Notes: This 170-nucleotide RNA was probed chemically with DMS.

RNA sequence: GGGAACGACUCGAGUAGAGUCGAAAAAACUUUGUGGGAGAGUUCGUUGUCAACGAUGUUGUCCUCGCAAUUCUCUCUGGAACCACAACUAAUGUUGACAAAAUACGCCAGCUUCUCAAAGGUGUCAGACGGCCAGCGUUCGCGCUGGCCAAAAGAAACAACAACAACAAC
Reactivity to DMS in 0.01 (KOAc 150mM, MgCl2 10mM, bicine 150mM(pH8.5), 24C), signal-to-noise 3, nucleotides 027 to 129: a030a000c060u000u000u000g010u010g000g060g000a060g120a120g050u040u000c160g000u000u000g030u000c000a060a120c000g030a100u060g000u010u000g030u120c000c210u000c000g060c150a080a060u000u000c020u000c000u020c000u070g180g000a000a300c000c090a120c000a040a000c070u140a060a000u030g000u010u060g010a000c010a080a000a210a180u000a090c210g060c010c040a000g000c000u020u040c000u010c030a050a170a000g010g100u030g060u010c000a060g000a190c300
The DMS profile rests on 2,202 reads.